[RMDB]
RNA sequence: GGGAACGACUCGAGUAGAGUCGAAAAGAUAUGGAUCUAUAGAAGAGUCUACUAGACGAAGAACACUCGUCGGAAACGACGAGUGGGAGUCUACUAGACUCCUAUAGAUCCUAAGUCAAAAGGUACUUAUUCCUUGUUCGCAAGGAAUAAGUACCAACAUUUUUGAUGGGUUCGCCCAUCAAAAAUGAAAAGAAACAACAACAACAAC
Reactivity to 2A3 in 0.01 (KOAc 150mM, MgCl2 10mM, bicine 150mM(pH8.5), 24C), signal-to-noise 1, nucleotides 027 to 156: g030a020u080a040u150g000g000a010u000c000u000a010u000a040g130a300a040g000a070g010u000c010u000a040c040u000a000g000a000c030g210a300a040g000a040a000c010a000c000u000c010g010u000c010g040g020a140a080a020c020g000a010c020g000a000g010u000g000g000g000a030g000u000c000u000a000c010u000a000g000a000c010u000c000c010u010a000u010a000g000a000u010c000c000u000a000a010g010u000c000a040a020a060a080g000g000u000a000c000u000u010a000u000u010c000c000u010u000g040u060u080c280g010c070a000a000g000g020a000a000u000a000a000g000u000a000c000c000a010a000